[RMDB]
RNA sequence: GGGAACGACUCGAGUAGAGUCGAAAAAACCUUUUCGAAGGUUCCAAAGGGCUCUCUGGCCGAGUGGUCUAAGGCGCUAGGGUAAGGUCCUAGUCUCUUCGGAGGCGCGAGUUCGAACCUCGCGGGAGUCACCAUAGUCAUGAGUUUCGACUCAUAACUGGUCUAUCAUAUUCGUAUGAUAGACCAGAAAAGAAACAACAACAACAAC
Reactivity to DMS in 0.01 (KOAc 150mM, MgCl2 10mM, bicine 150mM(pH8.5), 24C), signal-to-noise 1, nucleotides 027 to 156: a010a000c030c010u020u010u010u000c200g000a080a120g000g010u000u000c010c000a070a120a140g000g010g020c020u010c050u010c020u010g020g000c000c010g000a110g020u010g090g000u000c050u000a080a140g010g000c090g050c010u010a070g000g010g030u000a050a110g000g010u010c010c000u000a040g020u000c000u000c030u010u000c150g010g020a100g010g010c000g060c030g000a110g010u020u010c160g020a300a130c190c000u000c020g040c000g040g000g010a050g020u000c020a090c030c020a040u000a110g020u050c100a040u000g010a300g030u000u000u000c160g010a030c010u000c020a050u030a040a110
Reactivity to 2A3 in 0.01 (KOAc 150mM, MgCl2 10mM, bicine 150mM(pH8.5), 24C), signal-to-noise 2, nucleotides 027 to 156: a000a060c010c010u020u000u030u050c120g070a030a000g000g010u050u000c030c010a110a090a080g090g000g000c010u040c020u030c040u070g050g000c020c000g020a050g010u200g040g070u100c030u100a010a030g030g000c020g020c020u010a000g040g020g020u040a060a070g080g010u050c030c010u000a000g030u010c010u000c020u070u090c220g100g010a040g010g060c000g000c020g010a000g000u050u110c040g010a020a030c000c000u000c030g000c000g000g000g020a010g020u030c020a040c110c030a090u060a100g100u140c050a040u060g000a010g050u060u080u160c120g070a010c010u030c030a020u110a110a060